[RMDB]
RNA sequence: GGGAACGACUCGAGUAGAGUCGAAAAACACGGUGCAUACGUGCACCGUGAACACAUGAUGAUUGACUGUAACAUCACAGACUUUGAGUCGCGAUGAUAGCAACCAUGUCGCCCCAGUCUGACGUAAUCUAAGGCCCUACUUCGGUAGGGCCUUAGAAAAAGAAACAACAACAACAAC
Reactivity to DMS in 0.01 (KOAc 150mM, MgCl2 10mM, bicine 150mM(pH8.5), 24C), signal-to-noise 2, nucleotides 027 to 126: a140c000a000c000g020g000u020g000c010a040u000a020c210g030u000g010c000a000c000c000g000u000g010a000a030c140a120c040a020u030g020a160u000g040a100u000u000g020a120c080u000g000u000a040a160c000a020u000c070a010c060a130g010a040c000u000u040u010g000a070g020u000c020g000c070g000a000u020g000a100u070a060g000c000a000a000c060c070a020u010g050u000c160g010c050c000c000c080a110g040u060c060u040g080a140c090g000u000a070a070
Reactivity to 2A3 in 0.01 (KOAc 150mM, MgCl2 10mM, bicine 150mM(pH8.5), 24C), signal-to-noise 1, nucleotides 027 to 126: a000c000a000c010g000g000u000g000c010a040u000a020c090g090u000g000c000a000c000c000g000u010g000a000a000c030a000c000a030u030g020a120u030g030a110u070u000g160a220c030u110g130u050a000a010c000a000u000c000a010c030a140g020a010c030u060u190u300g120a070g030u110c000g000c000g030a040u070g000a070u040a040g060c000a000a000c000c000a040u120g000u000c150g040c090c000c000c010a050g060u000c050u110g200a170c110g000u060a010a000

Chemical mapping of a 177-nucleotide RNA with DMS and 2A3. Values are in units of 0.01, from 0 to 300, in steps of 10. For 2A3 the reverse transcriptase was SuperScript II with manganese. For 2A3, 591 sequencing reads were counted.